Annotation: The record gives the reactivity of an RNA of 177 nucleotides to 2A3 and DMS. The reactions ran in a buffer of 150 mM KOAc, 10 mM MgCl2 and 150 mM bicine (pH 8.5), at 24 C. For 2A3 the reverse transcriptase was SuperScript II with manganese. It was measured as part of the RMDB libraries RFM100 and RFMREP.
RNA sequence: GGGAACGACUCGAGUAGAGUCGAAAAUGGGGGCAAGAUCCUCUUUAGACUCUUGUACCCCUAAAUUUGGCGGGAAUUCGUUCCUGCCAUUUUGCUUUUCUUGCAAGACAAUAGCGUCGCAAGACAAAUAAAGUCUGUGUUUCGACACAGACUUUAUAAAAGAAACAACAACAACAAC
Reactivity to 2A3 in 0.01 (KOAc 150mM, MgCl2 10mM, bicine 150mM(pH8.5), 24C), signal-to-noise 7, nucleotides 027 to 126: u040g000g000g000g000g000c000a000a000g000a010u040c020c020u100c070u100u070u110a050g010a020c060u010c000u020u010g030u300a300c010c000c000c000u010a020a030a020u020u010u030g010g000c020g010g000g020a000a000u050u030c160g080u130u000c000c000u000g000c000c000a000u000u010u010u000g030c000u070u080u050u010c000u000u000g010c040a130a170g020a020c020a050a230u180a290g110c110g050u010c010g010c010a000a000g020a020c050a020a180
Reactivity to DMS in 0.01 (KOAc 150mM, MgCl2 10mM, bicine 150mM(pH8.5), 24C), signal-to-noise 6, nucleotides 027 to 126: u010g010g010g000g010g000c000a000a010g010a050u000c080c120u010c260u010u030u040a070g010a060c160u000c000u000u000g010u010a170c010c000c000c000u000a010a010a030u000u000u010g000g010c000g020g000g000a020a020u010u050c230g020u010u000c000c010u000g000c000c000a000u000u010u000u000g010c150u000u010u010u010c000u010u010g020c020a100a160g020a020c030a100a140u020a120g000c240g000u000c020g000c030a020a030g000a070c300a050a080